[RMDB]
RNA sequence: GGGAACGACUCGAGUAGAGUCGAAAAGAACGAAAGAAAGCGGUUGGGUGGGUCCAUCGACCGUCGUGGCGUAUUCGGACGCUUUACCACGACGCGAGGAAAUAGCGAGACCGACCACCCCCUUUAACAGAGGUAUAGUAGUUCGCUACUAUACCAAGUGUUAUUUACAGUUCGCUGUAAAUAACACAAAAGAAACAACAACAACAAC
Reactivity to DMS in 0.01 (KOAc 150mM, MgCl2 10mM, bicine 150mM(pH8.5), 24C), signal-to-noise 2, nucleotides 027 to 156: g010a110a130c040g000a110a090a180g010a080a100a100g010c050g000g000u020u000g010g010g040u000g010g010g010u000c010c000a160u000c070g010a080c150c020g010u000c010g000u000g000g000c010g020u000a080u000u000c040g000g000a150c050g020c060u010u010u000a050c010c030a040c000g010a010c020g010c010g000a140g010g020a020a070a080u000a070g020c010g000a130g020a140c040c010g030a020c000c000a020c000c000c010c020c030u000u010u020a060a220c100a130g010a130g000g000u000a010u000a000g020u000a010g010u000u010c300g010c000u000a020c000u010a010u000a010c000c000a020a040
Reactivity to 2A3 in 0.01 (KOAc 150mM, MgCl2 10mM, bicine 150mM(pH8.5), 24C), signal-to-noise 5, nucleotides 027 to 156: g040a060a020c030g030a040a040a080g080a040a080a010g110c100g060g060u150u110g060g000g010u020g030g020g020u020c020c020a080u120c020g000a030c020c000g000u030c010g000u000g010g020c070g030u090a130u090u160c080g090g020a040c020g030c020u120u080u150a060c010c000a010c000g010a000c000g000c010g010a050g000g040a050a080a070u080a030g060c040g020a030g050a070c000c040g010a010c010c010a020c010c010c000c000c000u020u110u090a110a050c100a040g070a030g130g010u000a000u000a000g010u000a000g010u030u030c080g020c070u000a000c000u000a000u000a010c010c000a000a010
This 207-nucleotide RNA was probed chemically with DMS and 2A3. The reactions ran in a buffer of 150 mM KOAc, 10 mM MgCl2 and 150 mM bicine (pH 8.5), at 24 C. Source: RMDB library M2RFPK, as collected in RNAgym. For 2A3 the reverse transcriptase was SuperScript II with manganese.